The record gives the reactivity of an RNA of 207 nucleotides to DMS and 2A3. Reactivities are rounded to 0.1 and cut off at 0 and 3. It was measured as part of the RMDB library OK3TST. For DMS the reverse transcriptase was MarathonRT. For 2A3, 5,227 sequencing reads were counted.
RNA sequence: GGGAACGACUCGAGUAGAGUCGAAAACGAUCAGUACGUUCGCGUACUGAUCGAAGCUACUGGAGACAGUAGCAAGUCUAAGAUCUUGUUAGGCGGAAACAAGGAAAAAUGGAGGAAGGCCGGAGCUCCAUACUUAGACAACCGCCAACAGGCCAAAACGACUAAUAAUGUUCGCAUUAUUAGUCGUAAAAGAAACAACAACAACAAC
Reactivity to DMS in 0.01 (KOAc 150mM, MgCl2 10mM, bicine 150mM(pH8.5), 24C), signal-to-noise 1, nucleotides 027 to 156: c010g060a030u000c000a050g000u010a030c010g090u010u010c300g070c030g050u000a000c000u000g000a000u010c000g000a000a060g000c000u000a010c010u000g010g030a300g010a300c010a010g010u000a030g010c000a040a080g010u000c020u000a070a070g020a150u000c000u000u000g010u000u000a200g010g010c050g000g010a270a070a140c100a070a050g030g000a040a090a060a090a090u000g000g030a030g000g020a110a080g000g000c030c030g000g040a280g020c010u020c040c010a030u000a080c050u020u000a040g010a030c050a110a260c030c030g000c030c030a030a050c040a070g000g030c020c030a040a110a180
Reactivity to 2A3 in 0.01 (KOAc 150mM, MgCl2 10mM, bicine 150mM(pH8.5), 24C), signal-to-noise 4, nucleotides 027 to 156: c010g000a000u000c000a000g000u000a000c010g020u030u090c260g000c000g110u000a000c000u000g000a000u000c000g000a000a000g010c000u000a000c000u000g000g030a040g010a040c000a000g000u000a000g000c010a000a020g000u000c010u060a070a040g020a150u040c020u040u020g010u040u030a140g030g040c040g050g020a080a050a020c030a040a070g090g000a080a110a060a020a020u010g010g010a010g040g010a140a100g050g030c070c040g050g010a030g040c000u000c000c000a000u020a080c020u020u000a020g010a050c040a070a050c030c020g000c020c000a020a020c010a020g020g010c020c000a070a040a010